[RMDB]
RNA sequence: GGGAACGACUCGAGUAGAGUCGAAAACCUCUAGUAUUCGUACUAGAGGCACAUCCCGCCCCAACGGCUUCCUGACGGGGCGGAUUCACUUUAAAUGGAGCAAAGCCGCUGUGUUCGCACAGCGGAACCAUUCAAGCCUGUUCGCAGGCUUGAAUGGAAAAGAAACAACAACAACAAC
Reactivity to DMS in 0.01 (KOAc 150mM, MgCl2 10mM, bicine 150mM(pH8.5), 24C), signal-to-noise 1, nucleotides 027 to 126: c010c010u000c000u020a000g010u000a000u000u050c160g000u000a010c000u000a010g040a020g030g000c040a010c130a110u000c150c010c020g010c000c000c010c000a050a300c110g020g000c030u000u020c000c000u020g000a180c300g000g020g000g000c000g000g000a000u000u000c080a090c210u000u020u000a040a040a060u010g000g030a040g000c040a220a090a160g000c010c000g020c000u020g000u000g020u000u000c200g000c000a010c000a000g000c010g010g010a000a000
Reactivity to 2A3 in 0.01 (KOAc 150mM, MgCl2 10mM, bicine 150mM(pH8.5), 24C), signal-to-noise 2, nucleotides 027 to 126: c000c000u000c000u000a000g000u010a030u010u070c190g050u020a010c000u000a010g000a010g000g000c060a000c010a100u020c030c000c010g000c000c010c010c010a040a000c080g120g000c020u300u100c040c010u010g010a020c060g010g000g030g000c030g030g000a020u170u110c060a020c150u070u130u270a070a110a070u230g010g000a010g010c000a050a050a000g020c000c000g000c000u000g000u000g030u080u100c240g040c050a000c000a000g020c000g010g010a000a010